Structure probing data (2A3 and DMS) for a 177-nucleotide construct. DMS adducts were read by reverse transcription with MarathonRT. 2A3 adducts were read by reverse transcription with SuperScript II with manganese. Reactivities are given for positions 27 through 126.
RNA sequence: GGGAACGACUCGAGUAGAGUCGAAAAGAUAUGGACCGACCCAGCAAGCUGGGUGGUCGGAAACGACCAUUAGUGAUGACCUGGGCGGUCCUAAGUCAAAACAUCGGGCUGUUCGCAGCCCGAUGAACACUAUUGAAUACUUCGGUAUUCAAUAGUGAAAAGAAACAACAACAACAAC
Reactivity to 2A3 in 0.01 (KOAc 150mM, MgCl2 10mM, bicine 150mM(pH8.5), 24C), signal-to-noise 4, nucleotides 027 to 126: g010a000u050a020u110g000g000a010c010c010g280a300c030c000c010a010g030c080a240a120g000c010u140g060g040g240u010g000g040u010c000g000g020a040a040a010c000g000a000c000c000a010u010u050a020g080u020g270a300u230g090a120c020c020u000g000g000g010c000g000g000u010c000c000u000a000a010g000u020c000a000a010a070a150c010a010u000c020g000g030g000c000u020g060u170u210c300g030c110a000g010c000c000c000g010a000u000g000a010a000
Reactivity to DMS in 0.01 (KOAc 150mM, MgCl2 10mM, bicine 150mM(pH8.5), 24C), signal-to-noise 5, nucleotides 027 to 126: g010a040u000a300u010g000g000a020c000c000g000a230c010c000c010a000g010c160a080a180g010c020u010g000g050g050u000g000g010u000c010g000g000a060a070a140c000g020a020c010c010a020u000u000a040g030u000g000a130u020g010a120c300c010u000g000g000g010c010g000g000u000c000c010u000a000a060g000u000c040a090a140a150a250c020a010u000c020g000g000g030c000u000g000u010u020c230g010c010a030g000c010c000c010g000a000u000g000a050a150